[RMDB]
RNA sequence: GGGAACGACUCGAGUAGAGUCGAAAAUCUUGCUGCUGAGUAUUAUUUAAAAACCAGAGUAAUAAAGCAGCUUCGCCUGAGGAUGAAGGCAAAGACAAAGUUAACUGCUCAGCAUACUGAAACCAGGCAUUCUAAUUCCUUUCGAGGAAUUAGAAUGAAAAGAAACAACAACAACAAC
Reactivity to 2A3 in 0.01 (KOAc 150mM, MgCl2 10mM, bicine 150mM(pH8.5), 24C), signal-to-noise 4, nucleotides 027 to 126: u010c000u010u080g010c010u000g000c000u000g060a000g030u030a060u140u030a070u060u210u090a170a250a020a020a020c050c010a050g010a020g170u020a030a080u050a060a110a020g030c030a000g000c030u030u030c020g020c000c000u060g040a100g210g040a150u140g070a040a030g010g000c030a000a040a010g060a030c060a040a140a000g030u050u050a080a050c040u050g030c010u010c010a030g000c010a040u090a160c040u040g050a080a030a050c030c020a030g050g000
Reactivity to DMS in 0.01 (KOAc 150mM, MgCl2 10mM, bicine 150mM(pH8.5), 24C), signal-to-noise 5, nucleotides 027 to 126: u000c030u000u010g020c090u000g010c000u000g000a110g010u000a030u010u000a040u010u010u010a070a090a060a100a110c160c140a120g010a070g010u010a020a030u010a070a090a060g010c060a060g000c000u000u000c090g010c010c010u000g020a200g010g010a160u000g010a140a050g000g000c010a030a070a050g000a090c100a070a120a140g000u000u000a030a100c200u000g020c020u000c050a050g010c020a050u010a080c080u000g000a100a080a180c100c030a060g000g020